[RMDB]
RNA sequence: GGGAACGACUCGAGUAGAGUCGAAAACAUUACGAAUUCAGUCGGAAAUUGUAGAAUUAGCUACUCUACGAUUUAGUGAGCGUUAGUAACGUUGUAAUAUAAUAUAGUCUUUGGAAGGAUUAUAUUGGAGCCGCGGACAAGUUCGCUUGUCCGCGAAGUCAACUUGUAGGUUCGCCUACAAGUUGACAAAAGAAACAACAACAACAAC
Reactivity to 2A3 in 0.01 (KOAc 150mM, MgCl2 10mM, bicine 150mM(pH8.5), 24C), signal-to-noise 3, nucleotides 027 to 156: c020a040u090u210a030c030g050a030a110u180u080c040a050g140u070c010g100g110a060a030a030u020u030g000u020a010g030a030a040u050u020a060g040c040u060a010c020u000c000u010a000c000g010a040u020u060u110a090g010u070g060a030g030c030g020u040u110a050g030u080a090a060c050g000u000u000g020u060a070a160u100a060u030a140a010u010a010u000a000g000u020c000u060u100u150g120g040a110a060g020g020a000u000u000a010u000a010u020u040g070g010a100g110c100c010g000c000g010g000a000c000a000a000g010u040u090c100g030c120u000u010g000u000c000c000g000c010g000a000a000